Chemical mapping of a 177-nucleotide RNA with DMS and 2A3. Source: RMDB library OK2TST, as collected in RNAgym.
RNA sequence: GGGAACGACUCGAGUAGAGUCGAAAAGAGCCGGACCUGACCGCGCCGCUCGCCGCGACGACCGAGAUCAACCUGCACGCGCCCGCGAUCCUGCCCGCCGACUAUUGCGGCGACGUGCAGGAGCGGAAGCGUGCACCCCAUUCGUGGGGUGCACGCUAAAAGAAACAACAACAACAAC
Reactivity to DMS in 0.01 (KOAc 150mM, MgCl2 10mM, bicine 150mM(pH8.5), 24C), signal-to-noise 3, nucleotides 027 to 126: g010a110g000c060c050g030g010a090c050c020u010g000a060c070c050g020c160g020c040c030g010c060u000c030g010c100c070g000c040g000a070c050g000a080c060c010g010a070g000a100u000c070a090a210c050c010u000g000c040a030c030g010c050g000c100c000c000g000c020g010a110u000c030c030u000g010c020c030c010g010c010c020g020a100c120u000a110u000u010g000c020g000g010c000g000a040c130g000u010g010c000a010g000g010a030g010c040g000g010a110
Reactivity to 2A3 in 0.01 (KOAc 150mM, MgCl2 10mM, bicine 150mM(pH8.5), 24C), signal-to-noise 3, nucleotides 027 to 126: g040a010g040c040c070g030g010a050c010c050u040g060a050c000c030g050c020g000c050c020g000c020u020c030g040c020c010g050c020g020a040c040g010a020c030c000g020a020g020a130u050c030a030a080c010c010u050g000c040a030c030g050c010g010c030c030c000g000c010g030a070u040c010c010u030g010c020c020c010g010c030c010g090a130c070u180a190u220u300g020c000g010g000c000g060a110c030g020u100g000c000a000g010g000a000g000c010g010g020a000
The RNA was probed in 150 mM KOAc, 10 mM MgCl2 and 150 mM bicine (pH 8.5) at 24 C. Reactivities are given for positions 27 through 126. DMS adducts were read by reverse transcription with MarathonRT.